[RMDB]
RNA sequence: GGGAACGACUCGAGUAGAGUCGAAAAAGAUCACAUUAUUAUGUGGAUUCCGUUACAGUUAAAGAGACUGUUGUUCAGUUUAAUUAUCGUAGAGACGGUCAACCAUUCUACGAGCGGUUUCCCCUCUGACCAGGUAUCUUCGGAUACCUGAAAAGAAACAACAACAACAAC
Reactivity to DMS in 0.01 (KOAc 150mM, MgCl2 10mM, bicine 150mM(pH8.5), 24C), signal-to-noise 7, nucleotides 027 to 129: a050g010a060u040c010a030c000a000u000u030a070u050u070a010u050g000u030g000g000a070u020u010c030c000g000u010u010a090c190a070g030u010u010a050a040a070g020a030g020a030c020u000g000u050u040g040u010u000c070a120g020u030u040u020a050a070u050u030a070u020c000g020u000a010g020a040g020a120c180g030g000u050c190a100a110c060c020a200u030u010c020u000a020c030g030a040g000c050g000g020u000u000u000c000c000c000c040u040c020u080g000a300c190
Reactivity to 2A3 in 0.01 (KOAc 150mM, MgCl2 10mM, bicine 150mM(pH8.5), 24C), signal-to-noise 9, nucleotides 027 to 129: a010g100a080u070c000a000c000a000u030u150a120u250u150a040u170g010u020g050g040a040u050u030c000c000g010u020u070a030c030a060g010u040u090a060a060a010g200a020g000a030c010u000g090u160u060g090u140u220c030a020g010u010u020u050a090a090u080u090a050u040c010g000u020a010g000a010g020a110c130g040g010u080c080a160a190c120c020a060u130u000c000u000a010c000g000a000g010c020g000g000u000u010u010c020c000c000c000u020c050u050g020a040c000